[RMDB]
RNA sequence: GGGAACGACUCGAGUAGAGUCGAAAAGAGGGUUUGAGGAGAACUCACCUCCAGAGGACCCCUUCAGCGAACAGAGGAGUCUCUACCUCGGAGGAGAAAGACCGUAGCGAUGGGGGAGAUGCUAGGAACGGGGUAGUCUUCGGACUACCCAAAAGAAACAACAACAACAAC
Reactivity to DMS in 0.01 (KOAc 150mM, MgCl2 10mM, bicine 150mM(pH8.5), 24C), signal-to-noise 6, nucleotides 027 to 129: g040a160g020g030g060u000u000u000g020a300g010g010a090g050a180a150c160u050c170a130c030c010u040c000c010a040g040a080g000g000a090c000c000c000c000u000u000c130a100g010c030g020a060a080c080a070g000a090g050g020a110g040u040c050u080c080u050a140c140c030u010c110g040g020a040g030g020a030g050a010a020a010g000a070c070c080g040u030a060g010c150g040a080u020g000g000g080g040g030a030g010a060u000g030c090u000a090g140g020a080a040c180g070
Reactivity to 2A3 in 0.01 (KOAc 150mM, MgCl2 10mM, bicine 150mM(pH8.5), 24C), signal-to-noise 5, nucleotides 027 to 129: g150a040g000g000g000u070u130u110g030a060g020g040a060g010a130a050c010u030c080a070c030c000u000c010c020a080g010a020g060g010a040c030c000c000c000u050u040c080a020g020c020g050a040a050c020a020g020a010g060g040a020g040u020c020u020c030u110a160c020c020u010c000g020g000a020g030g010a050g020a020a110a000g060a000c020c000g070u070a030g050c040g070a120u140g010g020g000g050g000a010g000a000u100g030c050u100a050g030g030a080a020c070g000